RNA sequence: GGGAACGACUCGAGUAGAGUCGAAAAGGAAUUUGCAGUUAGAUUAGACAGUAUGGGAAGUACACAUGCUGUUUAAUCCCACAAUAAAAACCCUGAGUACUUACAGGUACACUGAGGUGCAAAUCAGUCGGUUUGAUAUGUUCGCAUAUCAAACCGAAAAAGAAACAACAACAACAAC
Reactivity to 2A3 in 0.01 (KOAc 150mM, MgCl2 10mM, bicine 150mM(pH8.5), 24C), signal-to-noise 4, nucleotides 027 to 126: g060g000a110a050u000u030u000g000c020a010g030u050u050a010g040a000u000u000a000g000a010c000a000g000u010a000u010g020g060g070a220a100g210u170a040c110a000c000a060u000g000c000u000g000u000u000u000a000a000u000c000c010c000a050c010a050a090u230a100a030a010a010a000c000c000c000u000g000a000g040u000a010c020u120u060a110c080a120g120g000u020a020c080a010c010u070g030a070g060g000u040g000c000a000a010a060u030c000a000g110
Reactivity to DMS in 0.01 (KOAc 150mM, MgCl2 10mM, bicine 150mM(pH8.5), 24C), signal-to-noise 2, nucleotides 027 to 126: g000g000a050a050u010u010u020g010c030a150g000u010u000a140g010a010u000u000a000g000a000c010a000g010u000a000u000g000g000g060a120a160g010u050a150c100a060c050a010u000g000c010u000g000u000u000u000a000a050u030c000c070c300a040c090a090a080u030a040a010a120a120a060c000c000c000u010g000a070g030u000a000c020u010u040a120c300a070g000g020u000a020c040a150c010u010g010a030g050g010u000g030c010a000a010a010u020c030a110g000